[RMDB]
RNA sequence: GGGAACGACUCGAGUAGAGUCGAAAAGUGCAGAUCUUGGUGGAAGUAGCAAAUAUUCAAGUGGGAUCCUUGAAGACUGAAGUGGGGAAGGGUUCCAUGGUAACAGCAGUUGGACAUGGGUUAGUCGUUCGAGCGAUAAAUUCGUUUAUCGCUCGAAAAAAGAAACAACAACAACAAC
Reactivity to 2A3 in 0.01 (KOAc 150mM, MgCl2 10mM, bicine 150mM(pH8.5), 24C), signal-to-noise 2, nucleotides 027 to 126: g100u050g000c030a010g000a130u010c010u050u070g050g000u040g000g060a090a030g020u100a000g040c070a080a050a060u140a130u110u130c070a140a010g000u020g000g000g000a020u030c010c000u040u000g010a090a050g020a030c040u130g020a100a030g090u100g040g020g010g020a000a000g000g000g000u010u000c000c000a000u030g000g030u030a050a030c070a050g080c020a050g000u090u100g050g000a050c060a050u060g010g050g000u030u070a030g080u040c020g010
Reactivity to DMS in 0.01 (KOAc 150mM, MgCl2 10mM, bicine 150mM(pH8.5), 24C), signal-to-noise 3, nucleotides 027 to 126: g030u000g000c070a000g010a030u010c020u010u000g000g020u010g000g010a080a050g010u010a050g000c090a100a050a090u020a060u030u010c060a070a070g020u010g010g000g000a050u000c040c020u000u000g000a050a080g000a100c080u000g030a070a090g030u000g030g000g010g010a050a050g000g010g020u010u010c010c000a010u010g010g000u020a040a080c150a110g010c050a070g000u000u010g000g000a100c070a050u010g000g020g000u010u010a070g010u010c080g020